[RMDB]
RNA sequence: GGGAACGACUCGAGUAGAGUCGAAAAGGGCAGGACACAAAAGGUCGAUCGCUGUGUGAGUCAGGAUGCGGGAAGGUCUUCACUGCAGCAGUAAUCACACCAAUCUGGUUAAACGGCAAACUAAGUGGAGCGCUGUGAUGUUCGCAUCACAGCGCUCAAAAGAAACAACAACAACAAC
Reactivity to 2A3 in 0.01 (KOAc 150mM, MgCl2 10mM, bicine 150mM(pH8.5), 24C), signal-to-noise 1, nucleotides 027 to 126: g000g000g020c100a000g000g020a010c020a000c010a000a160a090a000g060g000u090c060g000a000u010c000g010c100u020g020u020g040u040g060a040g030u010c050a030g010g010a060u080g020c020g000g060g010a000a000g030g000u010c010u060u000c010a010c050u050g070c000a090g010c000a000g030u070a030a050u050c050a050c000a020c020c000a060a070u000c060u050g060g030u060u050a130a100a060c060g000g000c030a020a020a040c070u070a060a060g080u050g160